[RMDB]
RNA sequence: GGGAACGACUCGAGUAGAGUCGAAAAUGGAACUGGAAUUUAACUCAAAGCUUUUAACAGUACAGUAAAUCAUGUAGCCUCCCUGAAAAUACAGGAGACUGAAAAAUUUAGGAACAUGCAAAAAGAGGGUACAAGUGUUGAGUUUAUAUACUAUCAAUGAUUUAUAUGGUUUCGACCAUAUAAAUCAAAAAGAAACAACAACAACAAC
Reactivity to 2A3 in 0.01 (KOAc 150mM, MgCl2 10mM, bicine 150mM(pH8.5), 24C), signal-to-noise 2, nucleotides 027 to 156: u060g040g020a040a030c060u050g010g040a060a120u100u070u010a040a000c010u020c040a060a070a090g000c020u180u100u130u210a060a060c010a030g020u010a030c020a000g030u120a090a050a030u080c030a030u020g020u040a070g090c000c020u010c040c000c020u020g100a150a190a000a030u160a120c020a010g010g010a000g040a040c080u080g090a130a090a040a000a030u130u200u120a030g000g000a060a000c000a000u040g060c040a030a100a000a000a000g060a060g020g070g000u040a020c030a090a020g020u000g050u030u010g000a000g000u000u040u000a070u010a010u010a020c070u100a040u260c020a060a090
Reactivity to DMS in 0.01 (KOAc 150mM, MgCl2 10mM, bicine 150mM(pH8.5), 24C), signal-to-noise 2, nucleotides 027 to 156: u020g040g000a070a110c040u000g020g000a140a110u030u000u000a060a020c010u000c080a060a090a140g020c000u000u030u010u010a050a150c040a130g020u000a110c020a090g030u000a050a080a070u060c020a010u000g010u000a030g040c020c000u000c010c060c000u000g010a090a070a130a190u000a130c070a070g020g020a100g000a130c010u000g000a040a120a270a110a140u000u000u020a040g020g000a090a070c040a060u000g000c070a030a090a010a080a120g010a110g020g010g010u000a080c010a070a040g020u000g030u010u000g010a060g000u000u000u010a060u000a140u000a050c030u010a110u000c000a050a300